[RMDB]
RNA sequence: GGGAACGACUCGAGUAGAGUCGAAAAGCAGGACGGAAAGCAGCCCCUGCGUCAGGCCGUAGUAGCCAGUAACGAAAAUCACCCGCUGCACGAUGCGGUUAACCAUCAAACCAAAGUUUAGCCACAGGACAUGGUCCAGAUUCGUCUGGACCAUGUCAAAAGAAACAACAACAACAAC
Reactivity to DMS in 0.01 (KOAc 150mM, MgCl2 10mM, bicine 150mM(pH8.5), 24C), signal-to-noise 2, nucleotides 027 to 126: g010c010a020g020g000a140c060g000g020a070a070a110g000c040a110g010c050c040c020c040u000g000c020g000u040c110a090g020g000c040c040g040u000a140g000u000a070g010c000c000a060g020u010a100a100c140g010a070a040a090a050u020c160a100c060c000c050g020c020u000g000c120a110c190g000a030u000g000c090g010g020u000u010a030a060c100c040a000u000c030a210a070a100c190c070a020a070a100g000u030u000u000a030g000c000c010a120c200a120g000
Reactivity to 2A3 in 0.01 (KOAc 150mM, MgCl2 10mM, bicine 150mM(pH8.5), 24C), signal-to-noise 2, nucleotides 027 to 126: g000c010a020g000g050a040c110g060g060a240a110a020g060c020a020g000c020c000c000c000u020g020c000g050u030c050a030g060g000c020c040g110u180a150g010u080a040g070c040c030a010g040u080a060a050c130g090a100a050a010a040u120c030a050c030c010c010g020c010u030g000c010a050c070g030a010u040g040c170g090g000u030u010a000a020c000c000a030u030c040a170a000a050c040c020a080a060a000g000u010u040u030a020g020c010c010a050c020a020g150
The record gives the reactivity of an RNA of 177 nucleotides to DMS and 2A3.
The data come from the RNA Mapping Database (RMDB), library OK2TRN.
The 2A3 profile rests on 2,160 reads.
The reactions ran in a buffer of 150 mM KOAc, 10 mM MgCl2 and 150 mM bicine (pH 8.5), at 24 C.